Chemical mapping of a 177-nucleotide RNA with DMS and 2A3.
The 2A3 profile rests on 5,189 reads.
The reactions ran in a buffer of 150 mM KOAc, 10 mM MgCl2 and 150 mM bicine (pH 8.5), at 24 C.
For DMS the reverse transcriptase was MarathonRT.
High 2A3 reactivity points to a flexible backbone, as in loops and unpaired stretches.
It was measured as part of the RMDB library TTRDEL.
Values cover nucleotides 27 to 126.
For DMS, 2,512 sequencing reads were counted.
RNA sequence: GGGAACGACUCGAGUAGAGUCGAAAAGAUAUGGAUCACGCUUUUGACGAAAUAGUAUCGGAAACGAUACGAAUUUCGAUAAGCCUGAUCCUAAGUCAAAACCACUGGAGGUUCGCCUCCAGUGGAACCUGAUAAAAAUCUUCGGAUUUUUAUCAGGAAAAGAAACAACAACAACAAC
Reactivity to DMS in 0.01 (KOAc 150mM, MgCl2 10mM, bicine 150mM(pH8.5), 24C), signal-to-noise 3, nucleotides 027 to 126: g000a040u010a300u010g000g010a010u000c000a000c300g030c000u000u000u010u000g030a160c110g000a000a010a010u000a190g000u000a000u000c000g000g000a070a080a140c000g020a020u000a000c000g000a050a070u000u010u000c000g000a140u010a020a030g010c000c080u000g000a000u010c000c010u000a010a080g000u010c010a110a070a150a170c000c000a010c000u000g000g020a010g020g000u010u010c290g020c020c010u000c000c000a020g000u000g010g000a010a020
Reactivity to 2A3 in 0.01 (KOAc 150mM, MgCl2 10mM, bicine 150mM(pH8.5), 24C), signal-to-noise 3, nucleotides 027 to 126: g020a010u090a010u150g020g000a010u010c000a000c030g000c010u110u110u130u300g300a180c080g000a010a010a010u020a020g000u000a010u020c010g020g010a060a020a040c010g000a020u000a010c000g020a040a070u000u010u000c040g030a050u010a010a010g010c000c010u010g000a000u010c010c000u000a080a020g010u020c010a000a030a120a200c000c000a000c000u000g030g000a000g020g080u100u110c200g130c040c000u000c000c000a010g010u000g000g000a000a020